[RMDB]
RNA sequence: GGGAACGACUCGAGUAGAGUCGAAAAGAUAUGGAGUGGUGGAGCGGGAGAUGCUUGUCGGAAACGACAAGCGGAAUUCGCCCACGCACUCCUAAGUCAAAAGCGUAUCAUGUUCGCAUGAUACGCAGUUAAAACCGUAGUUCGCUACGGUUUUAACAAAAGAAACAACAACAACAAC
Reactivity to 2A3 in 0.01 (KOAc 150mM, MgCl2 10mM, bicine 150mM(pH8.5), 24C), signal-to-noise 5, nucleotides 027 to 126: g010a000u040a020u130g010g000a000g000u010g020g000u020g000g040a300g080c050g030g190g100a170g010a010u060g010c000u010u000g000u000c000g000g020a050a040a040c010g000a000c010a000a010g000c020g010g010a010a010u270u150c010g000c010c000c000a010c020g030c000a000c000u000c000c000u000a040a010g030u010c040a050a050a120a110g010c000g000u010a000u000c010a000u010g100u110u160c300g030c160a010u000g000a000u000a010c000g000c000a000
Reactivity to DMS in 0.01 (KOAc 150mM, MgCl2 10mM, bicine 150mM(pH8.5), 24C), signal-to-noise 6, nucleotides 027 to 126: g000a030u010a300u010g000g010a020g030u000g010g020u000g000g010a170g050c010g040g020g010a070g020a300u010g000c000u000u000g010u000c000g020g010a070a060a130c000g010a010c000a000a010g010c000g000g000a180a180u000u000c010g020c010c000c000a000c010g020c000a010c010u000c000c000u010a010a080g000u020c030a080a110a120a140g000c000g010u000a000u000c010a010u000g010u000u010c280g000c010a000u000g000a010u000a000c000g030c000a020